[RMDB]
An RNA of 177 nucleotides, treated with DMS and read out base by base. For DMS the reverse transcriptase was MarathonRT.
RNA sequence: GGGAACGACUCGAGUAGAGUCGAAAAACUGCCUGUUUCGACAGGCAGUAGUCUACUUCGCGCAACCGCCGAGUCGUUCCCGCGGUUGCGUGAAGUAGUUUGAUAUGAUCUUAUUCGUAAGAUCAAACAUCAAAAGCUUGUUCGCAAGCUUUUGAUGAAAAGAAACAACAACAACAAC
Reactivity to DMS in 0.01 (KOAc 150mM, MgCl2 10mM, bicine 150mM(pH8.5), 24C), signal-to-noise 2, nucleotides 027 to 126: a010c000u010g000c000c000u010g010u000u000u020c170g030a050c000a010g000g000c010a000g000u000a010g000u000c010u000a010c000u000u000c000g010c000g010c010a030a010c010c010g020c010c240g000a120g010u000c010g020u010u000c000c000c000g020c030g000g000u000u000g010c000g020u000g010a000a010g000u000a010g000u010u010u000g020a120u000a130u000g000a010u010c000u000u000a060u010u000c220g010u000a010a000g010a010u000c010a040a100a220